[RMDB]
RNA sequence: GGGAACGACUCGAGUAGAGUCGAAAAGCACAAGACUUCGAACAUUAUAGCAGUUAGUAGUUGCCUAAACCCAUUGCAAUAUAUGGGACAGUAGAGGUCGCAAGCCUAUAUUGUGCGGUGAACAUUCAAAAGGGAUGGUACUUCGGUACCAUCCCAAGGCAAAUAUUUAGUUCGCUAAAUAUUUGCCAAAAGAAACAACAACAACAAC
Reactivity to DMS in 0.01 (KOAc 150mM, MgCl2 10mM, bicine 150mM(pH8.5), 24C), signal-to-noise 3, nucleotides 027 to 156: g010c010a060c030a040a100g010a070c020u000u000c020g000a080a120c060a120u000u010a080u000a070g040c000a050g010u010u010a170g000u000a110g010u010u000g020c020c040u010a050a080a140c020c000c000a040u020u000g010c050a130a170u000a130u010a020u000g000g020g010a070c070a080g020u000a090g020a030g030g030u000c000g020c160a080a120g020c020c010u010a080u000a060u000u000g000u010g010c030g030g000u000g000a060a110c090a110u000u000c070a030a060a080a240g030g010g030a020u000g000g030u000a000c000u000u000c300g040g020u000a000c000c000a000u000c000c000c000a010a020
Reactivity to 2A3 in 0.01 (KOAc 150mM, MgCl2 10mM, bicine 150mM(pH8.5), 24C), signal-to-noise 3, nucleotides 027 to 156: g040c010a020c010a020a060g040a010c010u010u020c040g030a100a020c040a180u140u150a170u120a100g040c030a020g010u070u170a060g020u170a030g040u100u090g030c020c010u030a060a060a080c010c010c000a000u000u040g000c010a000a010u030a020u010a000u210g000g000g010a030c010a000g010u020a000g010a000g030g000u000c010g000c010a000a020g020c010c020u060a050u000a010u160u060g030u020g020c050g020g010u090g060a120a090c070a140u210u300c190a220a040a040a110g000g000g000a000u010g010g000u000a000c000u020u080c200g050g000u000a000c000c000a000u000c000c000c000a000a000